[RMDB]
RNA sequence: GGGAACGACUCGAGUAGAGUCGAAAAGGAUGCAACGUAGUAAUAUGUGUGACCGCUAGCUCUUGAGUUACACAUUACUAGUCGUAAUUCGAUUCAAGAGCUAGAUCGAGUUACGACAUCUGUAUCGCUACUACAUACUAUUCGUAGUGUGUAGUAGAAAAGAAACAACAACAACAAC
Reactivity to 2A3 in 0.01 (KOAc 150mM, MgCl2 10mM, bicine 150mM(pH8.5), 24C), signal-to-noise 9, nucleotides 027 to 126: g030g000a000u010g000c010a030a040c080g060u040a050g010u020a030a090u050a080u170g030u000g010u010g030a030c010c030g010c100u040a030g040c010u030c000u040u090g050a050g040u010u030a020c030a000c000a010u000u010a000c010u030a030g050u020c020g000u000a000a010u010u020c020g000a000u060u030c030a040a010g040a010g050c020u030a020g000a010u030c010g000a000g030u000u000a000c010g010a010c010a010u010c020u020g010u010a010u010c010g000
Reactivity to DMS in 0.01 (KOAc 150mM, MgCl2 10mM, bicine 150mM(pH8.5), 24C), signal-to-noise 9, nucleotides 027 to 126: g000g010a010u000g010c030a070a130c300g010u000a020g010u000a050a060u000a050u000g030u000g010u000g010a030c070c120g010c050u000a050g010c030u000c020u000u000g000a090g010u000u000a040c080a030c110a030u000u000a000c010u000a130g010u000c110g000u000a010a010u000u000c060g000a010u000u000c050a030a020g000a030g010c040u000a030g000a020u000c020g000a050g010u000u000a010c010g010a060c010a050u000c100u000g020u000a030u000c040g010